The record gives the reactivity of an RNA of 177 nucleotides to DMS and 2A3. DMS adducts were read by reverse transcription with MarathonRT. Conditions: 150 mM KOAc, 10 mM MgCl2 and 150 mM bicine (pH 8.5), 24 C. For DMS, 3,712 sequencing reads were counted.
RNA sequence: GGGAACGACUCGAGUAGAGUCGAAAAGGACCACUGGACAAGAUUACGUCUUUCGGGACGGCUGUCCGGUCAAGGCCAUACGGACAGCCGGGUCCACUGCCGAAAAGAAAACAAAACAAAAAGAAAACGUGAACUUGGACUUCGGUCCAGGUUCACGAAAAGAAACAACAACAACAAC
Reactivity to DMS in 0.01 (KOAc 150mM, MgCl2 10mM, bicine 150mM(pH8.5), 24C), signal-to-noise 3, nucleotides 027 to 126: g000g020a060c050c010a170c040u000g010g000a050c060a090a050g010a100u000u050a120c070g040u000c010u000u000u020c070g000g000g020a180c030g000g000c010u050g000u000c000c000g000g020u020c140a090a100g010g000c060c110a110u030a100c020g000g030a000c050a030g010c040c000g000g020g000u000c030c030a060c090u020g010c040c000g010a090a070a050a070g010a130a090a070a100c180a080a070a080a120c220a090a090a090a150a130g010a080a060a120a110
Reactivity to 2A3 in 0.01 (KOAc 150mM, MgCl2 10mM, bicine 150mM(pH8.5), 24C), signal-to-noise 8, nucleotides 027 to 126: g040g030a030c000c010a030c080u070g040g020a020c060a120a060g020a220u170u220a130c080g030u040c000u030u040u080c090g050g000g050a040c020g000g000c000u000g000u000c000c000g000g010u050c020a030a070g090g000c020c010a070u120a140c020g000g000a000c000a000g000c000c000g000g010g000u000c010c000a020c040u080g030c020c010g030a050a050a010a030g150a020a070a020a000c060a040a060a040a020c080a020a140a000a020a020g170a030a080a010a010